[RMDB]
RNA sequence: GGGAACGACUCGAGUAGAGUCGAAAAACUAAUCCAAAGCAAGUAUAGGAGAACAGGUUUUUAACUAUUUUUACGCAGAUAAAAAAUAGUAUUUGACAGUCUAACACUAACUGAACAAUAAGUGUUAAAAAGUCGUCUCUGUUCGCAGAGACGACAAGGACAGUGUGAUGUUCGCAUCACACUGUCCAAAAGAAACAACAACAACAAC
Reactivity to 2A3 in 0.01 (KOAc 150mM, MgCl2 10mM, bicine 150mM(pH8.5), 24C), signal-to-noise 1, nucleotides 027 to 156: a010c020u030a060a020u000c010c010a020a000a000g000c010a000a000g030u030a030u060a110g030g010a030g020a070a060c170a240g030g050u040u000u000u000u000a040a010c000u010a000u030u000u000u000u000a030c020g040c100a090g150a240u210a100a030a000a000a000a000u000a000g010u010a020u020u010u020g010a000c000a000g010u000c010u000a000a000c000a010c010u000a030a000c000u000g030a010a010c000a010a030u000a010a000g000u000g010u010u000a010a020a000a000a000g000u010c010g000u000c000u000c000u010g070u050u090c160g000c070a000g000a010g000a010c000g000a000c000a000a020
Source information
The record gives the reactivity of an RNA of 207 nucleotides to 2A3. It was measured as part of the RMDB library M2RFPK. 2A3 adducts were read by reverse transcription with SuperScript II with manganese. The RNA was probed in 150 mM KOAc, 10 mM MgCl2 and 150 mM bicine (pH 8.5) at 24 C.